[RMDB]
RNA sequence: GGGAACGACUCGAGUAGAGUCGAAAAAAAAAUUGAGCAGGCCCAACACAAUGGCUCAUGCCUAUAAUCCCAGCACUUUGAGAGGCUGAGGGGAGAGGAUCGCUUGAAUCUCAGAGUCCAAGGCUGCUCUCUUAGAUUGUUUCGACAAUCUAAGAGAAAAAGAAACAACAACAACAAC
Reactivity to 2A3 in 0.01 (KOAc 150mM, MgCl2 10mM, bicine 150mM(pH8.5), 24C), signal-to-noise 3, nucleotides 027 to 126: a000a000a000a000a000u060u020g000a010g010c020a010g060g000c040c080c030a220a020c070a010c020a070a090u120g010g000c010u080c150a080u070g010c020c010u150a140u040a140a070u030c000c000c010a000g000c010a020c040u050u050u050g210a300g000a010g220g040c020u000g020a000g020g020g040g010a070g020a020g120g050a300u190c090g000c230u000u040g030a050a040u010c010u000c010a000g000a050g100u010c010c000a020a000g030g050c090u000g020c010
Reactivity to DMS in 0.01 (KOAc 150mM, MgCl2 10mM, bicine 150mM(pH8.5), 24C), signal-to-noise 4, nucleotides 027 to 126: a030a020a040a100a090u000u000g000a070g010c000a050g010g000c060c000c100a090a060c240a100c240a090a090u010g010g020c010u000c040a060u000g010c040c010u000a070u000a100a070u010c010c010c010a070g020c040a020c020u000u010u010g000a120g000a060g000g030c030u000g000a040g000g020g000g020a250g000a020g010g010a090u010c150g010c050u010u010g000a180a170u010c020u010c020a050g010a050g010u000c010c020a040a040g000g010c140u000g000c060